[RMDB]
RNA sequence: GGGAACGACUCGAGUAGAGUCGAAAACUCGCGAACCCAUAGAGGCGUGGGGAGCGACAUGAAUCAGCCUCGAUUAGAUGUGGUCGACCGUACGGCGGCGUACAGCGACCUAGUUAGAAGCCGCAAAACCGGAAGAGAUGACGCUCGACGGACGUCACGAUAUUUAAAUGUUCGCAUUUAAAUAUCGAAAAGAAACAACAACAACAAC
Reactivity to DMS in 0.01 (KOAc 150mM, MgCl2 10mM, bicine 150mM(pH8.5), 24C), signal-to-noise 3, nucleotides 027 to 156: c030u010c000g040c020g010a130a300c010c010c030a110u000a110g020a040g070g020c060g020u000g010g020g000g000a240g030c030g040a100c060a090u030g010a150a140u010c080a100g010c000c000u020c000g000a190u000u000a070g040a110u000g030u020g000g040u000c020g000a120c010c010g010u000a050c000g030g010c180g030g020c080g030u000a030c030a130g000c000g000a040c020c020u000a070g020u000u000a110g010a060a120g010c010c020g020c040a050a070a110a150c050c060g020g000a110a140g020a220g020a120u000g020a000c020g000c020u000c020g030a120c020g010g000a060c030g020u010c020a170
Reactivity to 2A3 in 0.01 (KOAc 150mM, MgCl2 10mM, bicine 150mM(pH8.5), 24C), signal-to-noise 3, nucleotides 027 to 156: c010u010c000g000c000g030a150a090c000c000c000a000u010a020g030a020g000g030c020g000u010g010g020g000g000a030g000c000g050a050c040a120u300g100a110a140u140c060a040g010c000c000u010c010g020a110u140u180a070g090a150u110g090u090g070g000u020c020g020a210c060c050g000u020a010c000g080g010c020g020g010c000g010u030a020c020a010g000c000g000a040c010c030u000a010g010u010u050a080g030a150a020g010c010c010g000c000a020a030a050a140c050c030g080g020a120a010g040a050g010a070u070g020a010c020g020c060u030c030g050a060c030g040g000a050c000g010u020c020a010